[RMDB]
RNA sequence: GGGAACGACUCGAGUAGAGUCGAAAAGAUAUGGAUUAUUAGGCUCGCAGCCCGAGAGCGACGAUCAUACGGGAUCGGAAACGAUCUUAUGGGAGCUCGGCGGCUGCGAGCCUAAUAAUCCUAAGUCGAGUAUAGAGAGGUUCGCCUCUCUAUACUCAAAAGAAACAACAACAACAAC
Reactivity to DMS in 0.01 (KOAc 150mM, MgCl2 10mM, bicine 150mM(pH8.5), 24C), signal-to-noise 2, nucleotides 027 to 126: g010a120u010a300u020g000g030a030u010u000a020u010u010a000g000g000c000u010c000g020c010a020g070c010c000c010g010a300g000a010g000c010g030a090c300g000a070u000c010a020u010a060c300g000g020g000a030u000c000g000g000a080a130a300c000g000a000u010c000u000u000a010u000g000g010g000a030g020c000u000c010g000g050c300g000g020c030u010g020c000g000a010g010c030c010u000a010a010u000a000a010u000c000c020u000a010a040g000u000c110